An RNA of 177 nucleotides, treated with 2A3 and DMS and read out base by base. The RNA was probed in 150 mM KOAc, 10 mM MgCl2 and 150 mM bicine (pH 8.5) at 24 C. For 2A3 the reverse transcriptase was SuperScript II with manganese. The data come from the RNA Mapping Database (RMDB), library TTRDES. DMS adducts were read by reverse transcription with MarathonRT.
RNA sequence: GGGAACGACUCGAGUAGAGUCGAAAAAAAAGAUAUGGAAGAUUAAAACAGCUUGGACCUAAACGUAACAUCAUUCGGAAACGAAUGUGGUUUAGCUAGCUGGAGUACGAUCUUCCUAAGUCAAAAACCUAUACCCUAGGUUCGCCUAGGGUAUAGGAAAAGAAACAACAACAACAAC
Reactivity to 2A3 in 0.01 (KOAc 150mM, MgCl2 10mM, bicine 150mM(pH8.5), 24C), signal-to-noise 1, nucleotides 027 to 126: a050a020a020a040g090a020u080a050u090g000g010a000a010g000a040u050u190a070a060a000a020c000a000g030c010u120u270g040g070a080c030c000u020a030a010a000c000g080u070a120a030c030a220u300c000a010u010u040c000g010g040a030a060a080c000g000a000a000u020g000u000g000g060u030u040u020a000g010c030u000a000g000c000u010g050g000a010g070u060a000c170g000a000u000c020u000u000c000c000u030a110a000g090u060c040a150a000a110a000a000
Reactivity to DMS in 0.01 (KOAc 150mM, MgCl2 10mM, bicine 150mM(pH8.5), 24C), signal-to-noise 2, nucleotides 027 to 126: a020a040a070a090g000a070u000a300u010g000g000a000a000g000a000u000u000a020a100a180a110c000a010g000c020u000u050g070g030a240c300c000u010a000a030a010c000g000u000a090a130c140a040u000c000a000u010u010c010g020g000a080a120a150c000g000a000a000u010g030u000g010g000u000u040u000a010g020c070u010a010g000c010u000g000g020a080g000u000a070c300g000a020u000c000u000u000c000c000u010a020a120g000u020c030a060a050a070a110a080